[RMDB]
RNA sequence: GGGAACGACUCGAGUAGAGUCGAAAAGACACUCAGUUCGCUGAGUGUCAAAUAAAAUCAGCGGUUAAAAACGAGGCGUUAUAACCGCUCAACGCCUCGUUAAAAGAACCAAGUUCGCUUGGUUCAAGAACACUACACAGUUCGCUGUGUAGUGUUCAAAAGAAACAACAACAACAAC
Reactivity to 2A3 in 0.01 (KOAc 150mM, MgCl2 10mM, bicine 150mM(pH8.5), 24C), signal-to-noise 3, nucleotides 027 to 126: g010a000c000a000c000u000c010a020g040u050u060c120g000c100u000g000a000g000u000g000u000c000a010a000a000u010a000a000a000a060u090c040a020g070c040g060g080u120u170a150a100a060a000a000c010g020a000g010g000c000g000u000u050a070u050a160a040c040c030g010c020u000c010a000a010c000g000c000c000u010c010g000u000u020a000a010a000a020g000a000a000c010c010a000a010g010u020u060c160g010c070u010u000g010g000u000u000c000a000a030
Reactivity to DMS in 0.01 (KOAc 150mM, MgCl2 10mM, bicine 150mM(pH8.5), 24C), signal-to-noise 3, nucleotides 027 to 126: g000a000c000a020c000u000c010a000g010u010u020c230g040c000u010g010a020g010u000g010u000c000a030a070a060u000a050a060a100a080u010c090a050g010c030g000g000u000u010a040a110a060a020a010c000g000a010g010g010c010g020u000u000a060u010a050a190c050c050g000c080u000c120a040a000c010g010c000c000u000c000g020u000u010a020a060a080a080g010a010a000c000c000a010a010g000u000u010c260g010c000u000u000g000g010u000u000c000a060a120